[RMDB]
About this RNA: Chemical mapping of a 177-nucleotide RNA with DMS and 2A3. The RNA was probed in 150 mM KOAc, 10 mM MgCl2 and 150 mM bicine (pH 8.5) at 24 C. The 2A3 profile rests on 2,223 reads.
RNA sequence: GGGAACGACUCGAGUAGAGUCGAAAACAGCUAAAGGAAAAGCAGAAGUUUCGCUUUGCGUAUGGAAUGUCCGAGCGACAAUUCCGUAAUCUUUUUGCUCAGGCACAUCGGAUGAAGGGCGUGACGGCAUUACCGCAGGCUUCGGCCUGCGGUAAUGAAAAGAAACAACAACAACAAC
Reactivity to DMS in 0.01 (KOAc 150mM, MgCl2 10mM, bicine 150mM(pH8.5), 24C), signal-to-noise 2, nucleotides 027 to 126: c110a140g030c050u000a040a060a110g000g000a040a020a060a100g010c050a060g010a020a060g030u010u020u000c050g030c030u000u000u020g010c010g000u000a030u000g010g000a030a030u000g000u010c000c060g040a110g010c150g000a030c050a030a120u010u000c020c040g010u020a020a150u020c030u010u020u020u000u000g010c030u010c070a070g010g000c030a070c080a090u010c100g000g000a110u000g000a070a060g000g000g010c060g000u000g000a080c090g020g020
Reactivity to 2A3 in 0.01 (KOAc 150mM, MgCl2 10mM, bicine 150mM(pH8.5), 24C), signal-to-noise 4, nucleotides 027 to 126: c040a010g030c030u080a030a000a060g060g000a000a110a050a000g020c060a070g070a160a040g050u030u070u080c060g010c020u020u040u140g040c010g020u050a040u110g000g030a030a020u010g020u000c050c050g100a020g030c160g040a030c030a060a200u030u000c010c010g020u050a010a050u020c040u060u040u010u090u090g010c020u040c050a050g060g000c010a020c010a080u060c000g050g010a030u040g030a120a030g020g000g000c010g020u040g000a050c050g020g040
The data come from the RNA Mapping Database (RMDB), library OK1LIB.